[RMDB]
RNA sequence: GGGAACGACUCGAGUAGAGUCGAAAAUUGCCAUGUCACCAUUGCUGGAGUUUGUAAGACCAAUCAAGGAAUCUGUCGGCACCCAUGCACGGGGUCUUGGGGUGAUUCACUGUCAGCAUCGCAGGCAGCGAUAGCACAUGUUCGCAUGUGCUAUCGCAAAAGAAACAACAACAACAAC
Reactivity to 2A3 in 0.01 (KOAc 150mM, MgCl2 10mM, bicine 150mM(pH8.5), 24C), signal-to-noise 1, nucleotides 027 to 126: u030u020g070c000c000a030u080g030u020c020a020c120c020a080u050u120g030c020u010g000g020a060g020u080u150u200g040u080a060a010g040a100c030c020a040a080u130c050a000a060g000g020a070a020u020c010u050g130u090c030g000g000c020a040c010c040c000a030u100g060c080a020c000g000g050g000g010u000c000u000u070g010g000g000g000u030g010a080u000u060c020a020c050u030g070u110c000a010g000c000a040u050c030g010c040a000g050g050c010a040
Reactivity to DMS in 0.01 (KOAc 150mM, MgCl2 10mM, bicine 150mM(pH8.5), 24C), signal-to-noise 1, nucleotides 027 to 126: u030u000g020c000c010a110u010g010u000c070a130c090c070a130u010u000g020c030u010g000g000a030g010u000u000u000g020u020a060a070g000a120c040c040a070a080u000c090a080a100g000g010a010a070u010c040u010g030u020c080g000g000c030a110c060c040c080a070u000g000c060a070c080g030g010g000g000u000c000u030u020g010g000g010g010u000g000a080u010u000c090a090c080u000g020u000c030a070g010c020a110u000c110g000c090a130g010g020c050a090